[RMDB]
RNA sequence: GGGAACGACUCGAGUAGAGUCGAAAAGAUAUGGAGGGAGCAUGGGAGAUGUGGAUCGGAAACGAUCCAUACAUCGAAGAACAUGUAUCCCUCCUAAGUCAAAGUUGCAGACUUCGGUCUGCAACAAUCUUCAGUAUACCUUCGGGUAUACUGAAGAAAAAGAAACAACAACAACAAC
Reactivity to 2A3 in 0.01 (KOAc 150mM, MgCl2 10mM, bicine 150mM(pH8.5), 24C), signal-to-noise 1, nucleotides 027 to 126: g030a000u030a020u080g010g010a000g000g000g020a000g000c020a000u030g020g070g140a300g020a030u020g010u010g030g000a010u000c010g020g000a030a030a020c010g000a010u000c010c000a010u120a040c030a010u010c020g130a270a140g040a140a030c010a000u000g020u020a160u010c000c000c000u000c000c000u000a000a000g000u030c010a050a020a080g000u000u010g000c000a000g000a010c000u060u150c300g170g030u010c000u000g000c000a000a000c000a000a000
Reactivity to DMS in 0.01 (KOAc 150mM, MgCl2 10mM, bicine 150mM(pH8.5), 24C), signal-to-noise 3, nucleotides 027 to 126: g010a060u010a250u000g000g000a020g000g000g010a050g010c010a000u000g010g010g010a090g010a020u000g030u000g000g000a010u000c000g010g000a060a050a160c000g000a020u000c000c000a030u010a060c060a050u000c010g010a130a220g000a170a140c000a000u000g000u000a150u000c000c000c010u000c000c010u000a000a070g000u000c040a110a120a110g020u000u000g010c000a010g000a010c000u010u020c230g020g000u000c000u000g000c000a000a000c010a050a090
Structure probing data (2A3 and DMS) for a 177-nucleotide construct.
Conditions: 150 mM KOAc, 10 mM MgCl2 and 150 mM bicine (pH 8.5), 24 C.
Reactivities are given for positions 27 through 126.
For 2A3 the reverse transcriptase was SuperScript II with manganese.